[RMDB]
The record gives the reactivity of an RNA of 177 nucleotides to 2A3 and DMS. For DMS the reverse transcriptase was MarathonRT. The reactions ran in a buffer of 150 mM KOAc, 10 mM MgCl2 and 150 mM bicine (pH 8.5), at 24 C.
RNA sequence: GGGAACGACUCGAGUAGAGUCGAAAAUAGCUUGGAAGCAGCUAUUCAUUUAAAGAGUGCGUAACAGCUCACUAGUCGAGCGAUCGAGCGUGGAUAAUAAUCGGGCAUAAGCAUAGUACCGAAGAUAAUUGAGCACCUCAUUCGUGAGGUGCUCAAUAAAAGAAACAACAACAACAAC
Reactivity to 2A3 in 0.01 (KOAc 150mM, MgCl2 10mM, bicine 150mM(pH8.5), 24C), signal-to-noise 2, nucleotides 027 to 126: u000a000g000c000u000u050g100g150a120a050g000c060a000g020c010u010a040u030u120c050a160u010u030u300a120a120a000g110a020g050u070g000c000g000u020a090a000c020a030g090c000u010c010a050c010u050a040g110u100c060g010a010g040c000g000a040u040c010g010a000g000c010g000u050g000g060a070u020a060a000u150a000a050u200c000g000g000g000c000a040u020a150a000g040c000a170u060a070g090u020a060c020c010g010a020a000g000a000u280a140
Reactivity to DMS in 0.01 (KOAc 150mM, MgCl2 10mM, bicine 150mM(pH8.5), 24C), signal-to-noise 3, nucleotides 027 to 126: u000a000g000c000u000u040g000g020a230a130g020c080a070g020c000u000a040u000u050c100a070u070u050u000a110a130a110g010a070g000u020g020c020g030u020a100a190c140a100g000c000u000c040a080c130u030a120g000u000c060g000a010g000c170g000a080u010c100g010a190g000c070g060u040g030g020a100u040a150a040u040a030a030u010c020g000g020g030c020a100u050a100a180g050c110a110u020a150g020u040a050c000c050g010a030a080g010a160u010a070